Annotation
Chemical mapping of a 177-nucleotide RNA with 2A3 and DMS.
RNA sequence: GGGAACGACUCGAGUAGAGUCGAAAACAAGCGCAACCAUCCGGUCCAACCCCCCGGUGCGAUCGAGAUAGAUUCCAACGCCGACGGUGAGCACCGCGACCCACAUCAGCAACAUCGGAAUACCUCUCAGGAUUAGUCAUUUCGAUGACUAAUCCUGAAAAGAAACAACAACAACAAC
Reactivity to 2A3 in 0.01 (KOAc 150mM, MgCl2 10mM, bicine 150mM(pH8.5), 24C), signal-to-noise 5, nucleotides 027 to 126: c030a040a060g050c020g000c040a040a000c000c000a030u020c020c000g020g030u030c020c000a050a070c030c000c010c000c010c030g000g030u040g020c040g020a040u060c020g000a020g010a140u090a080g090a060u170u040c020c020a080a060c060g020c030c020g060a060c020g020g040u040g060a020g010c050a020c020c010g010c020g030a060c000c010c000a040c010a050u090c030a000g060c010a020a030c020a110u070c040g010g020a080a020u090a190c020c010u040c010u000
Reactivity to DMS in 0.01 (KOAc 150mM, MgCl2 10mM, bicine 150mM(pH8.5), 24C), signal-to-noise 1, nucleotides 027 to 126: c020a130a050g000c050g040c000a010a080c040c020a080u000c000c040g010g000u010c000c010a010a120c030c000c010c000c060c110g000g030u000g150c070g000a020u020c000g020a040g020a040u020a040g010a120u040u000c040c110a020a100c250g000c020c040g000a120c080g020g000u000g000a130g010c070a010c010c030g010c190g030a000c020c010c050a050c050a030u000c020a040g000c020a010a120c050a030u000c010g020g000a110a000u000a050c010c000u040c080u050
Conditions: 150 mM KOAc, 10 mM MgCl2 and 150 mM bicine (pH 8.5), 24 C. It was measured as part of the RMDB library OK1LIB. The 2A3 profile rests on 4,594 reads.